[RMDB]
RNA sequence: GGGAACGACUCGAGUAGAGUCGAAAAAAGGUGCCAUCAUAUCGGUUAAGAACUCUUAACUCUGAUGGCUUUCGAGUUAUGUGGUGCAUUGAAGCUCUCCCUUCAAAUGGUCGUACAGUUCCGUGAACAAUCGUAACAUGUUCGCAUGUUACGAUUGAAAAGAAACAACAACAACAAC
Reactivity to DMS in 0.01 (KOAc 150mM, MgCl2 10mM, bicine 150mM(pH8.5), 24C), signal-to-noise 9, nucleotides 027 to 126: a070a070g010g010u010g010c010c000a010u000c010a040u010a120u010c250g000g000u000u010a010a010g010a230a140c300u010c010u000u000a010a010c010u000c100u000g010a020u000g000g010c020u000u000u000c040g010a100g010u010u010a040u010g020u000g000g020u000g010c040a050u000u000g000a060a070g000c080u000c060u010c060c070c020u010u000c050a030a060a080u000g000g010u000c040g010u000a040c090a070g010u000u000c020c020g010u010g010a080a130
Reactivity to 2A3 in 0.01 (KOAc 150mM, MgCl2 10mM, bicine 150mM(pH8.5), 24C), signal-to-noise 5, nucleotides 027 to 126: a000a000g090g020u040g000c050c010a010u000c010a010u090a060u230c080g020g010u020u000a030a010g060a280a220c050u010c000u300u000a010a000c000u000c040u100g000a010u010g010g000c000u010u050u010c020g000a010g000u070u050a080u110g060u060g020g060u060g050c020a040u040u060g060a050a020g000c000u010c010u030c040c000c000u000u010c020a060a080a090u070g040g020u030c010g010u040a040c020a060g020u030u000c020c010g040u070g040a020a030